[RMDB]
RNA sequence: GGGAACGACUCGAGUAGAGUCGAAAAGCCCAGAAGCCUCCCCUCAAAAUCGUUUCAGUCCAAAAUUGAUUCGGCGGCCCUGUCAUGAGGCCGAAACGAAGGCGCGUACCCCUUCGAAUGGCGUCGGAACUUUCAGUCGUAUUCGUACGACUGAAAAGACACAUAGAAUGUUCGCAUUCUAUGUGUCAAAAGAAACAACAACAACAAC
Reactivity to 2A3 in 0.01 (KOAc 150mM, MgCl2 10mM, bicine 150mM(pH8.5), 24C), signal-to-noise 1, nucleotides 027 to 156: g100c030c010c010a080g240a120a040g110c000c030u020c000c030c040c000u070c020a080a100a020a040u060c020g010u000u050u020c020a020g040u050c110c050a090a040a080a100u090u070g000a050u030u020c000g000g010c010g020g000c000c000c020u040g030u060c010a040u010g020a050g050g010c010c000g010a000a000a000c000g000a010a000g020g010c040g000c020g120u130a130c030c000c010c000u010u010c000g040a020a080u030g000g010c000g050u030c020g070g050a050a050c000u050u020u000c000a000g000u000c000g000u000a000u040u000c120g020u050a000c000g000a000c000u000g000a000a000a000a010
Reactivity to DMS in 0.01 (KOAc 150mM, MgCl2 10mM, bicine 150mM(pH8.5), 24C), signal-to-noise 2, nucleotides 027 to 156: g010c000c010c010a180g010a140a200g000c000c010u000c010c020c000c000u000c070a110a100a110a110u000c010g020u000u000u010c030a070g050u000c040c120a040a070a220a110u000u000g000a060u020u000c020g040g000c040g010g030c020c000c010u000g030u000c110a090u010g020a030g020g020c000c010g000a010a030a070c000g020a030a040g000g020c040g000c050g000u000a110c080c000c000c010u000u000c040g020a090a110u000g000g010c040g030u010c020g020g010a080a080c080u000u000u000c000a010g020u000c010g020u000a030u000u020c290g020u000a000c000g010a040c000u000g000a000a020a060a060

This 207-nucleotide RNA was probed chemically with 2A3 and DMS.
For 2A3 the reverse transcriptase was SuperScript II with manganese.
DMS adducts were read by reverse transcription with MarathonRT.
It was measured as part of the RMDB library M2RFPK.
The RNA was probed in 150 mM KOAc, 10 mM MgCl2 and 150 mM bicine (pH 8.5) at 24 C.